[RMDB]
RNA sequence: GGGAACGACUCGAGUAGAGUCGAAAACAUCCUUUAGUGAACUACUUUUUGAUUGCGUUGAUCUUUCAGUAGCUUCUACCUAUUUUUUAGUCCGCAUCUUGCAAGAUAAGACUGGCGACUUUAUGUCCCGGUAAACUAAGUUCGCUUAGUUUACCGGAAAAGAAACAACAACAACAAC
Reactivity to 2A3 in 0.01 (KOAc 150mM, MgCl2 10mM, bicine 150mM(pH8.5), 24C), signal-to-noise 3, nucleotides 027 to 126: c010a030u050c000c000u070u090u100a110g000u050g050a030a010c000u020a020c000u040u040u060u020u030g010a020u000u070g130c110g110u060u200g000a010u010c000u010u010u000c020a010g000u000a010g000c060u020u000c030u030a090c000c020u060a240u120u130u030u000u030u090a030g000u040c070c050g040c030a010u030c020u030u060g020c060a120a040g000a190u110a060a010g010a050c040u030g080g000c020g010a010c000u010u090u020a170u140g030u010c000
Reactivity to DMS in 0.01 (KOAc 150mM, MgCl2 10mM, bicine 150mM(pH8.5), 24C), signal-to-noise 2, nucleotides 027 to 126: c200a120u000c020c020u000u000u000a050g020u000g000a040a060c020u000a020c020u000u000u000u020u000g000a020u010u010g030c240g000u010u000g010a050u000c020u000u000u010c030a040g010u000a030g020c150u000u000c050u000a110c070c070u000a000u000u010u000u010u010u000a010g030u010c090c050g040c040a100u000c030u010u000g000c120a070a080g010a120u010a100a030g000a020c170u010g010g010c020g020a040c030u000u000u000a050u030g010u000c050